Description: This 207-nucleotide RNA was probed chemically with 2A3 and DMS. DMS adducts were read by reverse transcription with MarathonRT. For DMS, 1,472 sequencing reads were counted. The 2A3 profile rests on 932 reads. Source: RMDB library OK3TST, as collected in RNAgym.
RNA sequence: GGGAACGACUCGAGUAGAGUCGAAAAAGACAAAGAAACACCAGUAAUGCUCAAUAAAUCUCAUUAUGUAGCUAAAACUCCAGAAAUUCAAGACGAACCAUGGAAACCAAAAUUCGAUUGGAAAGAGUCAGAACCGAUCACAGAUCGAAAAAGCACAUAUUUUACGGCUAUUCGUAGCCGUAAAAUAAAAAGAAACAACAACAACAAC
Reactivity to 2A3 in 0.01 (KOAc 150mM, MgCl2 10mM, bicine 150mM(pH8.5), 24C), signal-to-noise 2, nucleotides 027 to 156: a020g050a000c060a010a160a030g150a100a160a010c070a050c030c010a000g040u090a080a050u060g000c000u030c060a000a120u100a220a100a080u100c060u010c100a050u010u080a030u150g010u040a010g000c020u020a000a080a050a040c010u010c050c010a020g030a020a080a010u080u040c020a120a000g100a090c040g000a020a000c000c000a020u000g070g000a040a160a020c020c020a030a040a030a030u000u010c020g030a010u020u040g010g000a010a020a020g020a010g010u010c040a000g050a050a040c000c050g000a000u000c010a020c020a290g080a030u050c020g070a020a090a000a040a020g120c020a050c020a040
Reactivity to DMS in 0.01 (KOAc 150mM, MgCl2 10mM, bicine 150mM(pH8.5), 24C), signal-to-noise 1, nucleotides 027 to 156: a080g010a300c060a110a070a200g000a150a140a050c010a060c040c080a160g000u000a100a040u010g020c010u000c070a020a130u000a030a150a190u010c000u000c030a040u000u000a050u000g000u010a060g030c030u000a030a050a080a050c040u000c000c000a140g000a040a040a070u000u000c090a060a100g020a130c030g050a060a090c060c060a160u000g010g000a030a040a060c010c000a060a030a060a150u000u000c000g000a130u040u070g000g000a130a080a270g030a070g030u000c070a100g020a120a110c060c000g020a070u000c030a130c020a170g020a040u000c040g000a010a020a040a130a070g000c000a040c060a040
Background
Conditions: 150 mM KOAc, 10 mM MgCl2 and 150 mM bicine (pH 8.5), 24 C.